[RMDB]
The record gives the reactivity of an RNA of 207 nucleotides to 2A3. 2A3 is a SHAPE reagent: it acylates the 2'-hydroxyl of flexible nucleotides of all four kinds. The RNA was probed in 150 mM KOAc, 10 mM MgCl2 and 150 mM bicine (pH 8.5) at 24 C. For 2A3 the reverse transcriptase was SuperScript II with manganese. The 2A3 profile rests on 1,504 reads. Source: RMDB library OK3TST, as collected in RNAgym.
RNA sequence: GGGAACGACUCGAGUAGAGUCGAAAAGUCACGAGGAGACUCGUGACAGCAUGCUUCGGCAUGCAAGGGUCGGCAUGGCAUCUCCACCUCCUCGCGGUCCGACCUGGGCAUCCGAAGGAGGACGCACGUCCACUCGGAUGGUUAACGGAGAGCCAAAACUACGCUCCCUAUUCGUAGGGAGCGUAGUAAAAGAAACAACAACAACAAC
Reactivity to 2A3 in 0.01 (KOAc 150mM, MgCl2 10mM, bicine 150mM(pH8.5), 24C), signal-to-noise 2, nucleotides 027 to 156: g000u000c010a000c000g010a000g000g020a050g030a030c000u000c000g010u000g000a000c000a000g020c000a000u000g000c000u050u040c170g140g000c000a000u000g000c010a020a060g010g020g000u000c010g000g000c110a160u080g010g000c020a140u010c010u000c020c000a000c000c000u040c000c010u090c070g050c080g010g020u000c000c010g010a010c010c010u000g010g000g000c000a000u010c000c000g050a090a090g030g010a130g010g010a000c000g110c150a100c220g020u000c000c010a020c010u000c000g020g010a010u010g200g300u010u030a010a000c000g000g000a010g000a000g000c000c000a040a020a000